An RNA of 177 nucleotides, treated with 2A3 and DMS and read out base by base. The RNA was probed in 150 mM KOAc, 10 mM MgCl2 and 150 mM bicine (pH 8.5) at 24 C. High 2A3 reactivity points to a flexible backbone, as in loops and unpaired stretches. For 2A3 the reverse transcriptase was SuperScript II with manganese. The 2A3 profile rests on 22,044 reads.
[RMDB]
RNA sequence: GGGAACGACUCGAGUAGAGUCGAAAAUUCAAACUUUCAUCGACGCAAUGGUGCCCGGUGGUAGUACUCGCUUAAUGGAGCAUGACAACUUACGAUUCGAGGAAGAACCAUUCUACGUAACGAAUGACUCACUAUUUAAUUUCGAUUAAAUAGUGAGAAAAGAAACAACAACAACAAC
Reactivity to 2A3 in 0.01 (KOAc 150mM, MgCl2 10mM, bicine 150mM(pH8.5), 24C), signal-to-noise 9, nucleotides 027 to 126: u070u030c020a080a040a050c030u050u090u070c040a080u040c040g040a030c030g010c040a040a150u140g110g010u050g060c020c010c010g020g010u030g030g000u000a010g010u030a070c020u030c070g010c030u070u080a080a050u230g110g010a030g020c030a030u060g060a040c030a070a020c050u050u130a040c050g090a080u020u110c020g020a050g030g030a060a050g030a050a020c010c000a020u040u000c020u060a070c050g130u060a090a030c040g020a070a020u070g040a040
Reactivity to DMS in 0.01 (KOAc 150mM, MgCl2 10mM, bicine 150mM(pH8.5), 24C), signal-to-noise 9, nucleotides 027 to 126: u010u010c100a110a100a130c120u000u010u000c030a060u000c050g010a070c120g020c080a090a080u000g010g020u000g010c030c020c030g020g020u010g010g010u000a040g020u000a120c060u000c060g020c080u000u000a070a110u010g010g010a040g000c030a060u000g020a110c120a070a080c060u000u000a060c090g000a080u000u000c030g010a080g000g010a080a100g000a080a110c070c020a040u000u000c030u010a070c100g010u010a060a070c100g010a060a060u000g000a280